RNA sequence: GGGAACGACUCGAGUAGAGUCGAAAAACAAAACACCAAAGCCAAAGCCAGACAGCCACCAGAUUUUGGCUGAGUAUAGAGACUGAAACUGAACUUUGGCAGAUCCCUGCUUUCCAUGUUUUUUGAGAUCAUAAGUAUCAUUGGAUCAAAUCUGGCACGUAAUAAAUUUAUUCGUAAAUUUAUUACGAAAAGAAACAACAACAACAAC
Reactivity to 2A3 in 0.01 (KOAc 150mM, MgCl2 10mM, bicine 150mM(pH8.5), 24C), signal-to-noise 5, nucleotides 027 to 156: a000c090a010a060a020a020c060a030c030c050a110a050a000g000c000c000a010a010a000g020c010c000a010g010a150c010a010g030c010c010a040c030c040a150g070a300u150u190u100u130g060g000c000u000g010a000g020u040a100u080a160g100a010g050a060c030u080g060a100a080a020c000u010g010a010a010c000u020u020u010g000g010c010a000g000a010u030c000c010c010u020g040c050u080u100u030c040c010a040u020g140u040u020u050u060u090u200g150a100g010a030u080c060a070u100a230a020g070u140a050u140c040a060u090u130g050g020a010u040c040a030a120a040u050c020u050g020g020c120a000
Reactivity to DMS in 0.01 (KOAc 150mM, MgCl2 10mM, bicine 150mM(pH8.5), 24C), signal-to-noise 2, nucleotides 027 to 156: a080c050a050a040a090a130c060a130c020c030a040a100a180g000c010c030a020a050a080g040c010c010a040g000a140c050a040g020c000c010a090c110c040a150g020a160u000u010u010u000g000g040c050u000g010a140g010u000a130u000a140g000a220g010a080c020u020g000a080a070a050c030u020g010a000a050c020u000u000u010g000g050c010a130g000a120u000c020c010c020u010g020c050u010u000u020c010c080a090u000g000u000u010u000u000u000u000g010a080g030a070u000c050a150u000a060a110g020u000a040u000c060a080u000u000g000g010a050u000c010a050a070a090u000c040u000g020g020c070a180

Description
The record gives the reactivity of an RNA of 207 nucleotides to 2A3 and DMS. For 2A3 the reverse transcriptase was SuperScript II with manganese. Values cover nucleotides 27 to 156. For DMS the reverse transcriptase was MarathonRT. The DMS profile rests on 2,988 reads.